[RMDB]
RNA sequence: GGGAACGACUCGAGUAGAGUCGAAAAGCGUACUACAAGAUGAGGAAGCUGGAGUUGCUGAAGUCCCUUGUCCCAAAUAGGACAAGGGUCACAGCAACGUUGAAAGCUUCUACCCACCAUCUUGUAUCGCAAACACGUUCGCUUCGGCGAACGUGAACCUUCGCUGUAGGUUCGCCUACAGCGAAGGAAAAGAAACAACAACAACAAC
Reactivity to 2A3 in 0.01 (KOAc 150mM, MgCl2 10mM, bicine 150mM(pH8.5), 24C), signal-to-noise 1, nucleotides 027 to 156: g020c000g030u100a040c010u030a000c000a020a000g000a030u020g020a020g030g000a010a000g000c000u020g040g060a080g000u010u020g020c000u010g080a240a050g060u070c000c000c000u000u010g020u050c020c010c030a130a300a140u260a070g000g000a000c000a010a000g000g020g000u000c000a000c010a000g000c010a000a000c000g000u020u060g010a040a010a000g010c000u020u000c000u010a040c030c040c010a050c010c010a000u000c000u010u010g000u000a000u300c000g000c030a040a090a030c010a000c000g020u000u000c000g020c000u070u120c280g040g000c000g000a000a000c000g000u000g010a000a010